[RMDB]
RNA sequence: GGGAACGACUCGAGUAGAGUCGAAAAUGGUCCCCCCUAUAAACUUGGGCUCCAAGUAGUGCACUCUUACCAAUGUGGGAUCCAUUACUAAACGAGUUUCCUGAAACCGUUCACGGUUUUAGGUGUACCAAGGAAUCGGCUUCGGCCGAUUCCUUGGAAAAGAAACAACAACAACAAC
Reactivity to 2A3 in 0.01 (KOAc 150mM, MgCl2 10mM, bicine 150mM(pH8.5), 24C), signal-to-noise 2, nucleotides 027 to 126: u230g020g080u040c090c000c010c000c000c000u020a030u180a130a220a020c050u110u020g020g030g070c020u010c060c000a100a000g030u000a000g000u080g000c040a040c180u130c000u120u110a100c000c030a170a170u080g040u070g000g000g000a000u000c000c030a000u000u030a060c100u140a040a070a080c000g050a130g090u050u220u000c000c000u060g040a040a000a000c070c010g070u300u170c300a220c200g000g120u030u000u020u000a000g040g000u010g010u000a000
Structure probing data (2A3) for a 177-nucleotide construct. For 2A3, 456 sequencing reads were counted. 2A3 adducts were read by reverse transcription with SuperScript II with manganese. Values cover nucleotides 27 to 126. The reactions ran in a buffer of 150 mM KOAc, 10 mM MgCl2 and 150 mM bicine (pH 8.5), at 24 C.